An RNA of 207 nucleotides, treated with DMS and 2A3 and read out base by base. 2A3 adducts were read by reverse transcription with SuperScript II with manganese.
RNA sequence: GGGAACGACUCGAGUAGAGUCGAAAAACGAGGUACGCCUCGAAAAUAUGACCGGUGUCAUAGCCUCUAGCACACAGAGGUCGCGUGGGUUCAACUCCCCACCUUUUCCGAGGGUAUCGGAAACCAAAAAACACAAUUUGGUUCGCCAAAUUGUGAACUAUAAUCAAUACUUCGGUAUUGAUUAUAGAAAAGAAACAACAACAACAAC
Reactivity to DMS in 0.01 (KOAc 150mM, MgCl2 10mM, bicine 150mM(pH8.5), 24C), signal-to-noise 4, nucleotides 027 to 156: a100c010g020a110g010g020u000a040c090g020c010c010u010c000g020a020a040a020a080u010a040u000g010a030c000c040g040g050u010g030u000c000a030u000a080g000c000c010u020c010u000a130g000c160a150c130a130c100a080g010a060g020g010u000c020g030c070g030u000g010g020g020u010u000c070a120a300c030u000c100c000c000c010a030c050c020u000u000u000u000c010c020g010a010g010g000g020u000a050u000c000g000g000a060a060a110c060c010a000a050a060a070a100a230c010a000c010a010a000u000u000u010g010g030u000u010c300g030c000c000a000a010a020u000u020g020u000g000a030a120
Reactivity to 2A3 in 0.01 (KOAc 150mM, MgCl2 10mM, bicine 150mM(pH8.5), 24C), signal-to-noise 9, nucleotides 027 to 156: a000c020g010a050g010g010u030a030c080g210c070c010u000c000g010a030a000a000a010u030a020u020g020a020c060c150g210g060u200g010u110c010a010u010a020g000c000c000u000c010u030a070g100c090a040c010a010c020a170g010a000g010g010u010c010g020c040g030u040g010g010g000u070u150c050a080a070c050u080c010c000c000c000a020c000c010u030u090u020u000c050c030g000a000g010g000g040u060a030u020c010g010g000a060a020a030c020c030a040a050a020a040a060a000c000a000c000a000a000u000u000u000g020g000u030u050c130g030c040c000a000a000a000u000u000g000u000g000a000a000
DMS adducts were read by reverse transcription with MarathonRT.
Values cover nucleotides 27 to 156.
The RNA was probed in 150 mM KOAc, 10 mM MgCl2 and 150 mM bicine (pH 8.5) at 24 C.
The DMS profile rests on 6,340 reads.
The data come from the RNA Mapping Database (RMDB), library M2RFPK.